About this RNA:
The record gives the reactivity of an RNA of 177 nucleotides to 2A3 and DMS. As a SHAPE reagent, 2A3 marks flexible, mostly unpaired nucleotides at the ribose 2'-OH. The DMS profile rests on 1,726 reads. The RNA was probed in 150 mM KOAc, 10 mM MgCl2 and 150 mM bicine (pH 8.5) at 24 C.
RNA sequence: GGGAACGACUCGAGUAGAGUCGAAAAAAACGAGCAGGGGCAACUGGACUGAAUGCAAUAGUGAUCAAUACUUCAACUGUCGGCGGGACAUCUCCCCCAAGUGAAACGCCGAUCAAGGUACCGAAGGCGUGCCUACUUCUUUCGAGAAGUAGGCACGAAAAGAAACAACAACAACAAC
Reactivity to 2A3 in 0.01 (KOAc 150mM, MgCl2 10mM, bicine 150mM(pH8.5), 24C), signal-to-noise 2, nucleotides 027 to 126: a000a000a000c140g010a050g000c010a030g030g060g070g010c030a070a010c100u060g040g090a010c010u030g060a050a070u050g040c030a000a060u010a070g130u080g050a040u040c000a030a190u030a070c000u000u020c020a100a030c020u020g010u030c000g000g070c020g030g000g000a010c000a060u070c090u080c040c000c000c000c010a010a030g000u020g020a020a000a000c000g000c000c020g020a020u030c040a030a020g050g000u050a060c000c070g000a010a000g100g000
Reactivity to DMS in 0.01 (KOAc 150mM, MgCl2 10mM, bicine 150mM(pH8.5), 24C), signal-to-noise 2, nucleotides 027 to 126: a020a070a050c200g050a010g050c040a100g010g010g040g080c110a070a060c050u000g020g010a020c030u010g030a090a100u000g030c040a050a070u030a120g000u000g000a060u010c160a040a010u000a150c030u000u000c000a060a050c000u010g000u000c000g070g000c040g000g000g000a300c010a000u000c050u010c000c040c010c000c000a090a180g000u040g000a010a190a110c020g020c000c020g000a020u000c070a020a050g010g020u000a010c150c000g020a120a050g020g000